[RMDB]
RNA sequence: GGGAACGACUCGAGUAGAGUCGAAAAGGCAAAUGGUCCAGAAAAUCCUCCAGCAGCCAAUCGUCCUGUAACUUGAGAUUAGCCGAUGUGUACAGCUUGUACUCCAAGCUUUCCUGGACGUAGAGCACCCUGGAGUCGAGUUCGCUCGACUCCAGGGAAAAGAAACAACAACAACAAC
Reactivity to 2A3 in 0.01 (KOAc 150mM, MgCl2 10mM, bicine 150mM(pH8.5), 24C), signal-to-noise 1, nucleotides 027 to 126: g080g000c010a000a180a040u230g020g000u040c000c010a000g050a030a090a000a000u060c000c020u020c010c010a040g010c010a010g010c000c020a010a110u120c000g030u040c000c020u060g050u080a040a110c070u020u070g020a020g010a230u040u170a040g000c060c060g060a070u050g070u010g040u160a010c010a020g080c050u140u130g100u120a080c020u000c050c030a080a020g000c000u070u020u010c000c000u000g060g020a010c040g030u080a040g000a000g040c080a140
This 177-nucleotide RNA was probed chemically with 2A3. It was measured as part of the RMDB library OK1LIB. 2A3 adducts were read by reverse transcription with SuperScript II with manganese. For 2A3, 706 sequencing reads were counted. Conditions: 150 mM KOAc, 10 mM MgCl2 and 150 mM bicine (pH 8.5), 24 C.